This 207-nucleotide RNA was probed chemically with 2A3. The 2A3 profile rests on 886 reads. The RNA was probed in 150 mM KOAc, 10 mM MgCl2 and 150 mM bicine (pH 8.5) at 24 C.

[RMDB]
RNA sequence: GGGAACGACUCGAGUAGAGUCGAAAAGGCCUAUGCGAAAGUUGGGCCUCACGGUCCAUAAUGUGGCAGGCACCGCGUGAGGCUGGCUUCACAGAGCAGCGACAACUGCCCGCUUCCAACGGUGGAAGGAUAACGGGCCGCUGCACUCCUAGGCCGCGGAAUAGAAUCCGUUCGCGGAUUCUAUUCCAAAAGAAACAACAACAACAAC
Reactivity to 2A3 in 0.01 (KOAc 150mM, MgCl2 10mM, bicine 150mM(pH8.5), 24C), signal-to-noise 2, nucleotides 027 to 156: g000g000c000c000u050a040u130g070c070g130a150a020a000g020u070u110g090g050g000c010c000u010c000a000c000g020g000u040c010c000a070u200a220a290u300g110u200g100g010c130a110g010g090c110a040c040c040g070c020g000u000g000a000g000g010c010u000g000g000c000u010u040c040a030c030a030g040a000g000c000a000g010c000g040a050c020a220a030c080u090g000c000c000c030g010c020u010u000c020c020a200a160c080g160g070u150g050g000a000a010g030g000a040u060a160a030c000g000g020g000c000c010g000c000u000g000c010a020c000u030c000c010u010a020g030g000c010c000g000c050